Overview: Structure probing data (DMS) for a 177-nucleotide construct. The RNA was probed in 150 mM KOAc, 10 mM MgCl2 and 150 mM bicine (pH 8.5) at 24 C. In probing experiments dimethyl sulfate is read out at A N1 and C N3, which are open when not base-paired.

[RMDB]
RNA sequence: GGGAACGACUCGAGUAGAGUCGAAAAGAUAUGGAUUGCGUAGAGAAUACUACCACCAAGGGAGUGCCCGUAUCGGAAACGAUACGGCACGAAGAACUUGGUGGUAGUAUUGUAGCAAUCCUAAGUCCUAAACGGGUACGUUCGCGUACCCGUUUAGAAAAGAAACAACAACAACAAC
Reactivity to DMS in 0.01 (KOAc 150mM, MgCl2 10mM, bicine 150mM(pH8.5), 24C), signal-to-noise 2, nucleotides 027 to 126: g020a090u020a270u010g000g000a000u000u000g020c000g020u020a250g010a120g000a040a000u010a000c000u000a010c020c000a020c000c000a000a030g010g000g000a080g010u000g010c200c040c060g030u010a000u000c000g010g010a170a110a240c010g010a010u010a000c000g030g000c020a000c000g010a060a140g030a090a180c000u000u000g000g000u000g000g000u000a000g000u000a000u000u000g000u030a140g000c000a020a000u000c000c000u000a020a090g020u000c030